Overview: The data come from the RNA Mapping Database (RMDB), library M2RFPK. This 207-nucleotide RNA was probed chemically with DMS and 2A3. The reactions ran in a buffer of 150 mM KOAc, 10 mM MgCl2 and 150 mM bicine (pH 8.5), at 24 C. Values are in units of 0.01, from 0 to 300, in steps of 10.
[RMDB]
RNA sequence: GGGAACGACUCGAGUAGAGUCGAAAAGAGCGAUUAGACAAAGGGGUAGAGCUACACAUUAGAUAGCUGUAUAAUCGUUCAAGUUACAUCAAAACAUCUUCAAUAUUUAUUACUUACUUUCCUUUCUGCCAGAGUACGGUAUUCGUACCGUACUCAACUUAAAAUUAUGGUUCGCCAUAAUUUUAAGAAAAGAAACAACAACAACAAC
Reactivity to DMS in 0.01 (KOAc 150mM, MgCl2 10mM, bicine 150mM(pH8.5), 24C), signal-to-noise 3, nucleotides 027 to 156: g000a040g020c000g000a050u000u000a030g010a090c050a060a080a100g000g000g020g020u000a090g000a070g020c030u000a020c030a080c090a210u000u000a110g010a250u010a030g020c020u010g000u010a070u000a020a030u010c040g000u000u000c020a070a110g020u000u000a090c050a100u010c070a030a090a130a100c030a050u000c050u000u000c040a050a110u000a100u000u000u000a080u020u010a080c040u000u000a080c040u000u000u000c010c020u000u000u000c050u000g010c050c050a180g010a040g010u010a010c010g000g020u000a020u000u000c300g020u000a020c000c000g020u000a000c000u000c000a010a040
Reactivity to 2A3 in 0.01 (KOAc 150mM, MgCl2 10mM, bicine 150mM(pH8.5), 24C), signal-to-noise 9, nucleotides 027 to 156: g000a000g000c000g010a000u010u020a030g050a070c070a050a130a060g040g030g030g040u080a030g030a010g060c010u030a010c060a010c000a160u140u130a080g140a230u020a000g100c010u000g010u030a040u010a010a000u000c010g000u000u000c000a010a000g020u030u120a060c050a080u120c060a060a120a090a090c030a100u070c070u260u110c070a120a140u090a210u190u200u120a120u160u130a090c030u070u050a030c010u050u080u100c020c000u030u060u060c020u030g050c040c040a050g000a000g010u000a000c000g000g000u000a010u010u040c100g030u020a000c000c000g000u000a000c000u000c000a000a000